[RMDB]
This 207-nucleotide RNA was probed chemically with 2A3.
It was measured as part of the RMDB library OK3TST.
2A3 adducts were read by reverse transcription with SuperScript II with manganese.

RNA sequence: GGGAACGACUCGAGUAGAGUCGAAAAAAGCCAUGCGCGAAGAAACAGACUACGUGUACAAUACAGUUUCAAAUUUCUUUCAAAAAACUAACAUAUCUAUUCAGAAGCCCAGCAGCAGUGUGGUCAACGUAGCCGUGUACGUUCACGACAACAAACACGACAGAAGCAGAUUCGUCUGCUUCUGUCGAAAAGAAACAACAACAACAAC
Reactivity to 2A3 in 0.01 (KOAc 150mM, MgCl2 10mM, bicine 150mM(pH8.5), 24C), signal-to-noise 1, nucleotides 027 to 156: a000a010g030c010c010a060u020g000c060g010c020g010a080a000g030a080a100a000c010a020g090a030c030u040a010c150g150u160g010u060a030c030a060a030u100a170c010a030g070u040u040u080c030a010a100a150u140u120u000c020u000u150u070c020a120a140a020a060a060a060c120u130a090a000c010a080u300a100u150c000u060a240u130u170c010a020g110a250a000g000c000c000c040a020g040c030a030g060c000a000g060u000g000u000g080g040u020c010a070a000c010g040u000a010g070c030c030g000u030g010u030a020c090g000u010u010c040a040c020g130a000c020a020a020c040a030a150a040c030a000